[RMDB]
RNA sequence: GGGAACGACUCGAGUAGAGUCGAAAAGAAAGAAAGAAAGACCCUGUUCGCAAUGGCACUGCAUGAAUUCACGGAUGCAAAGCGACAGACCGCGGAUCAUGCGGUACCAUAGCUGACGGUGGUGAAAAUAUCACAGACUGUUCGCAGUCUGUGAUAUAAAAGAAACAACAACAACAAC
Reactivity to 2A3 in 0.01 (KOAc 150mM, MgCl2 10mM, bicine 150mM(pH8.5), 24C), signal-to-noise 7, nucleotides 027 to 126: g120a020a060a010g110a040a100a010g100a030a120a000g030a010c000c000c000u000g010u010u030c020g000c010a010a030u010g000g000c010a010c010u000g010c010a010u010g000a080a110u030u020c010a000c020g000g020a020u020g020c000a120a300a180g110c070g080a070c010a000g080a090c000c000g000c010g000g000a020u010c000a000u000g000c000g000g000u000a000c000c000a000u010a030g010c030u030g010a000c000g000g080u230g050g000u030g050a030a040a010
Reactivity to DMS in 0.01 (KOAc 150mM, MgCl2 10mM, bicine 150mM(pH8.5), 24C), signal-to-noise 5, nucleotides 027 to 126: g010a100a080a080g020a100a080a080g020a080a130a100g000a050c000c010c010u000g010u000u000c300g010c010a130a010u000g000g000c030a010c000u000g010c000a010u000g000a040a120u000u000c000a030c000g000g000a270u000g000c020a040a090a150g000c300g010a140c010a030g010a160c000c000g000c090g000g010a000u000c010a010u000g020c010g010g000u000a000c000c010a010u000a020g030c000u000g020a030c010g030g000u020g020g010u000g010a070a060a070
This 177-nucleotide RNA was probed chemically with 2A3 and DMS. The data come from the RNA Mapping Database (RMDB), libraries RFM100 and RFMREP. Conditions: 150 mM KOAc, 10 mM MgCl2 and 150 mM bicine (pH 8.5), 24 C. For DMS the reverse transcriptase was MarathonRT. Values cover nucleotides 27 to 126.